[RMDB]
RNA sequence: GGGAACGACUCGAGUAGAGUCGAAAAAAAAAGGAGGAUGAGAAAUAUAGAGAGAGAUCGGUCCUCCCACGCGCGUCUCUCUCUGAUAAGAGGGAUAAGAGGAUGAUUAAUAGAUAGCGCGGAAAAAGUAAUACUUCAGAUUCGUCUGAAGUAUUACAAAAGAAACAACAACAACAAC
Reactivity to DMS in 0.01 (KOAc 150mM, MgCl2 10mM, bicine 150mM(pH8.5), 24C), signal-to-noise 4, nucleotides 027 to 126: a050a060a060a090a060g010g010a020g000g000a020u000g020a120g000a080a080a080u010a140u010a060g000a050g000a050g000a040g000a070u000c050g030g000u000c010c020u010c000c010c030a050c040g030c010g020c030g000u000c010u010c000u000c000u000c020u000g010a100u010a070a050g010a030g000g000g010a070u000a050a080g010a090g000g000a070u000g000a120u000u010a080a110u000a100g000a080u010a040g030c010g030c020g000g000a040a050a060a060a080
Reactivity to 2A3 in 0.01 (KOAc 150mM, MgCl2 10mM, bicine 150mM(pH8.5), 24C), signal-to-noise 3, nucleotides 027 to 126: a000a000a000a050a020g020g000a000g000g010a010u050g030a030g060a160a150a010u250a040u180a110g040a020g010a010g010a000g000a070u070c020g000g030u010c000c000u000c000c010c010a070c000g040c010g000c000g010u010c000u010c000u000c000u000c000u010g030a020u040a130a030g010a020g010g000g030a030u050a170a050g040a020g090g030a030u100g020a040u150u190a140a090u030a070g100a050u060a070g000c010g000c000g040g020a030a060a000a010a000